[RMDB]
RNA sequence: GGGAACGACUCGAGUAGAGUCGAAAAGGUCGGUGUUUCGACACCGACCACUUACCGAGAAUGUUCCUCGGUAUAUAAAACAAACCCUAGGAAACAAGGGAAUACGAAUCGUGUUCGCACGAUUCAACAAGAGUGAGACGUUCGCGUCUCACUCUUGAAAAGAAACAACAACAACAAC
Reactivity to 2A3 in 0.01 (KOAc 150mM, MgCl2 10mM, bicine 150mM(pH8.5), 24C), signal-to-noise 2, nucleotides 027 to 126: g010g010u000c000g000g000u020g020u020u060u130c130g030a010c000a020c030c000g020a030c000c000a000c000u020u010a020c000c010g000a010g010a060a170u300g030u070u090c000c010u010c000g030g040u010a030u000a020u020a110a030a030a020c070a040a120a150c010c000c000u020a020g100g120a150a070a080c060a020a050g050g050g010a080a060u150a120c080g000a010a000u000c020g000u000g020u060u020c180g030c050a000c020g000a000u000u000c000a010a000
Reactivity to DMS in 0.01 (KOAc 150mM, MgCl2 10mM, bicine 150mM(pH8.5), 24C), signal-to-noise 1, nucleotides 027 to 126: g000g050u000c010g020g010u000g010u010u000u030c140g000a070c030a010c000c000g030a000c000c000a050c060u000u000a020c000c000g010a040g010a140a200u050g010u020u000c090c000u000c040g010g000u000a010u000a090u000a040a010a080a070c100a070a090a080c010c000c010u010a200g000g000a110a040a130c070a070a040g010g010g010a200a110u000a050c150g010a010a010u020c000g000u000g010u000u000c120g010c010a020c010g010a000u000u000c000a030a120